[RMDB]
RNA sequence: GGGAACGACUCGAGUAGAGUCGAAAACUGCCGUUCGCGGCAGCGUUUGCGUACUACGUGAGGCUAGCGACAUGCUCUGCGCACUCCCAAAUAGGAGGAUCAGAGCAACAGCGCUAGCUCCCCACCACGUAUCGCCAGAGAAGGUCUUCGGACCUAACGAGUUUCAAUGUUUCGACAUUGAAACUCGAAAAGAAACAACAACAACAAC
Reactivity to 2A3 in 0.01 (KOAc 150mM, MgCl2 10mM, bicine 150mM(pH8.5), 24C), signal-to-noise 4, nucleotides 027 to 156: c010u000g000c030c000g060u100u110c300g000c010g140g010c000a010g000c020g040u050u170u200g070c040g010u060a150c060u000a020c020g010u000g030a010g010g000c000u000a000g000c000g120a150c020a090u040g000c000u000c000u000g050c100g030c120a100c030u060c040c020c090a150a280a150u300a080g000g010a010g040g000a100u060c000a010g000a000g000c020a010a000c040a050g000c000g000c000u000a000g000c000u020c000c000c000c000a020c000c000a010c000g000u000a030u300c060g040c090c060a080g020a000g050a230a060g010g000u010c020u050u120c210g130g000a000c000c000u010a080a010
Reactivity to DMS in 0.01 (KOAc 150mM, MgCl2 10mM, bicine 150mM(pH8.5), 24C), signal-to-noise 1, nucleotides 027 to 156: c000u000g000c000c010g000u000u000c300g000c040g040g020c020a000g030c020g000u000u040u010g030c000g000u010a060c020u000a220c000g010u000g000a090g030g000c020u010a010g010c020g010a060c030a300u000g000c020u000c010u000g000c080g010c240a300c000u020c000c000c000a030a080a280u050a100g020g000a040g030g010a150u000c040a010g030a060g080c000a000a040c090a210g010c000g010c030u000a010g010c010u000c020c000c030c020a130c000c030a120c100g010u000a010u000c060g030c010c070a170g000a170g000a100a010g010g050u000c010u010u000c300g000g000a040c010c000u010a010a100